[RMDB]
RNA sequence: GGGAACGACUCGAGUAGAGUCGAAAAGAAAGCUCCUCAACCGUGUGGAGGAGAAUGGCUAUAACCACUGAAACCUGAGGAAACAGGAAGCCACAACGCAAGCCAUGUGGUUAGCACACGGAAGAAACAUAUAAUGACCGUUCGCGGUCAUUAUAUGAAAAGAAACAACAACAACAAC
Reactivity to 2A3 in 0.01 (KOAc 150mM, MgCl2 10mM, bicine 150mM(pH8.5), 24C), signal-to-noise 9, nucleotides 027 to 126: g140a010a040a010g060c000u010c000c000u030c010a110a300c010c010g000u010g000u000g010g000a000g020g000a000g010a010a030u060g020g000c010u040a010u080a280a040c010c010a030c070u070g070a100a040a040c010c010u040g030a070g080g250a130a030a020c010a000g000g000a010a000g020c010c010a040c020a120a080c090g070c130a140a030g060c020c030a040u070g020u020g010g030u010u050a030g010c000a000c000a000c000g040g040a020a010g030a010a080a000
Reactivity to DMS in 0.01 (KOAc 150mM, MgCl2 10mM, bicine 150mM(pH8.5), 24C), signal-to-noise 8, nucleotides 027 to 126: g020a080a140a130g000c010u000c000c000u000c020a120a120c010c000g020u000g010u000g010g010a020g000g000a000g000a040a070u020g010g000c070u030a090u030a070a140c020c020a050c100u020g000a080a110a130c010c010u000g000a120g010g010a150a080a080c010a010g000g000a180a090g000c010c010a050c110a090a110c210g020c130a090a070g000c090c080a130u020g010u000g000g000u000u000a030g020c020a010c010a010c010g000g010a260a090g000a070a050a130